[RMDB]
RNA sequence: GGGAACGACUCGAGUAGAGUCGAAAACGACAGCUUUUCGAAGCUGUCGAUUGGCAAAGGCUAGGACCCGCCAGACAAAGGUCCGAUAGCAAAUCGUAACGAAGCUCGCCUGCUUCGGCAGGCGAAAUCUUACAUGUAUAUUCGUAUACAUGUAAGAAAAAGAAACAACAACAACAAC
Reactivity to DMS in 0.01 (KOAc 150mM, MgCl2 10mM, bicine 150mM(pH8.5), 24C), signal-to-noise 5, nucleotides 027 to 126: c010g000a000c000a010g010c000u010u000u010u010c150g020a030a020g010c000u010g000u000c000g010a030u010u010g010g020c110a100a100a120g010g020c040u010a130g010g010a040c000c000c130g000c080c080a090g010a150c180a050a100a110g000g000u000c010c020g010a120u010a040g000c040a090a100a110u010c090g000u000a070a070c110g010a100a120g010c120u000c030g000c000c010u010g000c000u000u010c170g010g020c000a000g000g000c000g010a010a020a030
Reactivity to 2A3 in 0.01 (KOAc 150mM, MgCl2 10mM, bicine 150mM(pH8.5), 24C), signal-to-noise 2, nucleotides 027 to 126: c010g000a000c000a000g000c000u040u070u050u130c150g150a010a000g020c000u000g000u010c010g000a040u010u080g060g020c060a080a100a100g090g000c000u060a060g010g010a020c000c020c030g040c070c060a100g040a140c120a050a100a010g000g010u000c010c000g040a100u080a020g000c000a050a040a080u130c090g080u150a120a060c090g040a060a010g020c010u000c010g000c000c000u000g000c020u040u040c170g070g000c000a000g160g110c040g000a040a000a010

Annotation
Conditions: 150 mM KOAc, 10 mM MgCl2 and 150 mM bicine (pH 8.5), 24 C. The record gives the reactivity of an RNA of 177 nucleotides to DMS and 2A3. It was measured as part of the RMDB library M2PK50. 2A3 is a SHAPE reagent: it acylates the 2'-hydroxyl of flexible nucleotides of all four kinds. The DMS profile rests on 6,193 reads. Values cover nucleotides 27 to 126. DMS adducts were read by reverse transcription with MarathonRT. For 2A3, 3,273 sequencing reads were counted.